[RMDB]
RNA sequence: GGGAACGACUCGAGUAGAGUCGAAAACACCAGCACGAUGGUCUGACCGGCGGCUUUCAGCUCGGCGAGUUGCGUGCCGACCUCGGCGGUCUCGGUCUGGUUCAUGCCCGCCGCCGGCUCGUCGAGACGUGCGCUAUGCAUUCGUGCAUAGCGCACGAAAAGAAACAACAACAACAAC
Reactivity to DMS in 0.01 (KOAc 150mM, MgCl2 10mM, bicine 150mM(pH8.5), 24C), signal-to-noise 1, nucleotides 027 to 126: c150a140c020c010a060g010c080a070c050g030a170u010g010g000u000c040u000g000a070c060c030g020g000c050g020g020c050u000u000u010c090a090g020c060u000c020g000g020c010g030a050g010u030u000g010c120g010u000g040c070c030g000a070c100c110u020c030g020g010c030g030g010u000c030u020c090g000g030u000c120u000g020g020u010u010c130a090u010g020c000c020c080g000c010c000g010c010c000g000g000c020u000c000g000u000c010g000a010g000a300
Reactivity to 2A3 in 0.01 (KOAc 150mM, MgCl2 10mM, bicine 150mM(pH8.5), 24C), signal-to-noise 2, nucleotides 027 to 126: c070a040c020c010a020g060c060a000c040g060a040u180g050g020u070c070u070g090a170c000c020g020g000c040g000g010c010u070u230u090c060a040g050c010u000c010g030g020c010g030a020g040u090u230g080c090g060u080g000c020c000g080a160c000c040u140c040g020g020c060g020g040u000c020u020c040g040g050u040c040u080g140g000u040u150c050a120u100g020c000c030c010g030c010c000g000c010c010g020g000c000u030c000g030u020c000g000a010g000a040

About this RNA: An RNA of 177 nucleotides, treated with DMS and 2A3 and read out base by base. 2A3 is a SHAPE reagent: it acylates the 2'-hydroxyl of flexible nucleotides of all four kinds. DMS adducts were read by reverse transcription with MarathonRT.